[RMDB]
Structure probing data (DMS) for a 177-nucleotide construct. DMS (dimethyl sulfate) methylates the pairing face of unpaired adenines and cytosines.
RNA sequence: GGGAACGACUCGAGUAGAGUCGAAAACUACGUUUUUGUGUUAUGGCUAGGUAGGUUAGUAAUUUACCAGUGACCUCUAUUUCUAUUUCAUUUGUUAAUUCACUUGUUAGAAAGCUGAAUUCAGCAAAAAUAAUACGGGUUUCGACCCGUAUUAUUUAAAAGAAACAACAACAACAAC
Reactivity to DMS in 0.01 (KOAc 150mM, MgCl2 10mM, bicine 150mM(pH8.5), 24C), signal-to-noise 3, nucleotides 027 to 126: c030u010a080c170g000u010u000u000u000u000g010u010g000u010u010a040u000g010g010c050u010a090g010g020u000a030g000g010u010u000a120g010u010a130a050u010u010u000a030c040c030a110g020u000g000a080c040c030u000c090u010a080u000u000u000c030u000a090u010u000u010c060a090u010u010u000g010u000u000a020a030u000u000c000a020c000u000u000g010u000u010a150g010a110a020a020g010c220u000g000a040a040u000u000c150a020g000c010a010a030

Description
Reactivities are given for positions 27 through 126. Conditions: 150 mM KOAc, 10 mM MgCl2 and 150 mM bicine (pH 8.5), 24 C.